[RMDB]
RNA sequence: GGGAACGACUCGAGUAGAGUCGAAAAGAUAUGGAAGCGUGACCCACUGUAUCUCUCGGAAACGAGAGUAUACAGUUAAAGGUGCACGCUUCCUAAGUCAAAAGAACAGUUGUUCGCAACUGUUCAAGAUGGGCGAUAAGUUCGCUUAUCGCCCAUCAAAAGAAACAACAACAACAAC
Reactivity to DMS in 0.01 (KOAc 150mM, MgCl2 10mM, bicine 150mM(pH8.5), 24C), signal-to-noise 1, nucleotides 027 to 126: g020a050u000a300u010g000g000a030a010g010c020g120u000g010a090c020c020c000a060c010u000g010u000a000u000c000u000c000u000c020g000g010a120a060a300c010g010a070g010a000g040u010a000u000a000c020a000g000u030u000a040a070a010g010g010u000g000c010a000c040g000c000u000u010c000c000u000a010a030g000u010c020a060a090a110a170g000a010a010c000a010g010u000u000g010u000u010c160g070c010a000a000c000u000g000u000u000c000a060a100